[RMDB]
This 207-nucleotide RNA was probed chemically with 2A3 and DMS. Source: RMDB library OK3TST, as collected in RNAgym. For 2A3, 978 sequencing reads were counted. For DMS the reverse transcriptase was MarathonRT. The DMS profile rests on 3,680 reads.
RNA sequence: GGGAACGACUCGAGUAGAGUCGAAAACGCAUGCGAAAGCAUGCGGCUAUGCUAAUGCAUAGUGACCACGUUUUUGCUACGUUAGUGGGCUAUCGCUUUGUUAUUGGUGAUAGCGUUUCCUCAUAGGUUUGUUAUUGCCUGUGUAGGUCCGUAGCUAGCUACUUACGAGGUUCGCCUCGUAAGUAGCAAAAGAAACAACAACAACAAC
Reactivity to 2A3 in 0.01 (KOAc 150mM, MgCl2 10mM, bicine 150mM(pH8.5), 24C), signal-to-noise 2, nucleotides 027 to 156: c010g000c010a010u010g020c010g050a050a050a000g000c000a000u010g010c010g000g000c010u010a000u000g000c040u250a300a070u300g010c000a000u000a000g000u010g070a040c000c040a040c050g000u020u000u040u080u050g000c010u010a000c010g050u090u150a100g040u140g060g100g000c000u010a000u000c000g000c060u040u000u210g130u190u140a180u150u130g080g000u000g000a000u000a000g060c000g040u010u040u030c010c000u040c000a000u000a020g000g070u050u110u110g260u170u300a150u230u120g020c010c000u000g000u030g080u100a000g000g030u000c010c000g000u000a000g000c000u000a000
Reactivity to DMS in 0.01 (KOAc 150mM, MgCl2 10mM, bicine 150mM(pH8.5), 24C), signal-to-noise 1, nucleotides 027 to 156: c010g030c000a010u000g000c000g010a200a070a240g030c010a020u020g020c000g010g020c000u000a000u010g010c000u020a070a160u010g030c000a030u000a020g000u010g000a300c050c000a130c250g010u000u000u010u000u000g020c020u000a030c010g030u010u020a180g000u010g030g020g050c000u000a020u000c010g010c000u000u000u000g030u000u000a300u020u000g010g010u000g010a030u010a000g000c020g000u010u000u000c010c020u000c000a020u000a020g050g010u000u010u000g030u000u010a090u020u000g010c020c000u010g040u000g020u000a010g050g030u000c110c030g020u000a020g020c020u000a040